Structure probing data (DMS and 2A3) for a 177-nucleotide construct. For DMS, 1,130 sequencing reads were counted. DMS adducts were read by reverse transcription with MarathonRT. For 2A3 the reverse transcriptase was SuperScript II with manganese.
RNA sequence: GGGAACGACUCGAGUAGAGUCGAAAAGCUAACACAAUUUUGCCAUCAUCAACUUGGUCAAAUUUACCCUUUGCACCACAAGCAGCUAGGAUCGCUGAAAGCCCUAAAAAGCCACUAAAAAGGGUAGCCCGUAAUCUAAGUUCGCUUAGAUUACGGGAAAAGAAACAACAACAACAAC
Reactivity to DMS in 0.01 (KOAc 150mM, MgCl2 10mM, bicine 150mM(pH8.5), 24C), signal-to-noise 2, nucleotides 027 to 126: g000c100u000a040a050c050a080c090a140a070u000u000u010u000g010c030c010a010u000c000a060u000c070a050a140c040u000u000g000g030u000c060a010a040a060u000u010u010a040c020c040c030u000u000u000g010c110a070c040c020a030c170a070a070g000c020a030g010c040u030a060g020g010a050u010c160g000c020u020g030a080a090a210g000c000c000c000u010a040a070a080a090a060g010c000c030a110c110u000a050a030a050a080a040g000g000g000u000a110g000
Reactivity to 2A3 in 0.01 (KOAc 150mM, MgCl2 10mM, bicine 150mM(pH8.5), 24C), signal-to-noise 2, nucleotides 027 to 126: g030c010u030a090a000c000a000c040a090a060u000u050u110u160g000c020c000a020u040c000a050u010c010a020a120c050u040u050g000g000u090c030a000a120a070u100u120u090a040c000c000c000u020u030u020g100c090a070c040c000a020c010a060a040g030c020a000g030c000u020a040g050g170a100u100c080g000c010u000g020a080a020a010g020c000c000c010u060a110a020a000a000a000g040c010c010a030c070u150a110a060a010a040a020g010g010g000u030a000g070